[RMDB]
RNA sequence: GGGAACGACUCGAGUAGAGUCGAAAAACGCGAUGCUGGCCACCGGGCUGCUGGCGCUCUACCAGCUGACCUCCGAGGGCGCGUGGCUGACGGCGGCUACCGGAUUGCUGGACACCGCGGUGGCGCAAUUAAUGCGAGUAUUCGUACUCGCAUUAAUAAAAGAAACAACAACAACAAC
Reactivity to DMS in 0.01 (KOAc 150mM, MgCl2 10mM, bicine 150mM(pH8.5), 24C), signal-to-noise 7, nucleotides 027 to 126: a070c050g020c030g010a050u000g020c040u010g010g010c010c110a060c030c020g010g000g010c070u010g010c010u000g010g010c020g010c100u000c070u000a120c040c030a060g000c050u010g010a120c060c040u000c090c100g010a120g010g000g010c020g020c040g020u000g010g000c050u000g000a140c040g010g010c020g000g000c020u010a070c030c020g000g000a150u000u000g010c010u000g000g010a140c070a070c050c020g020c020g010g010u000g000g010c040g010c110a110
Reactivity to 2A3 in 0.01 (KOAc 150mM, MgCl2 10mM, bicine 150mM(pH8.5), 24C), signal-to-noise 4, nucleotides 027 to 126: a000c020g000c020g030a040u080g000c040u040g060g030c020c000a020c020c000g000g080g040c060u050g000c000u020g120g030c010g030c100u040c020u060a070c020c020a030g030c050u110g110a290c000c010u060c060c060g070a180g030g030g010c010g000c040g050u040g040g000c040u020g030a030c040g020g180c000g030g000c010u050a090c000c010g000g060a190u050u150g000c010u030g020g050a070c020a010c040c020g020c010g010g010u010g040g000c040g000c040a010
Chemical mapping of a 177-nucleotide RNA with DMS and 2A3. The reactions ran in a buffer of 150 mM KOAc, 10 mM MgCl2 and 150 mM bicine (pH 8.5), at 24 C. The 2A3 profile rests on 6,673 reads. It was measured as part of the RMDB library OK2TST.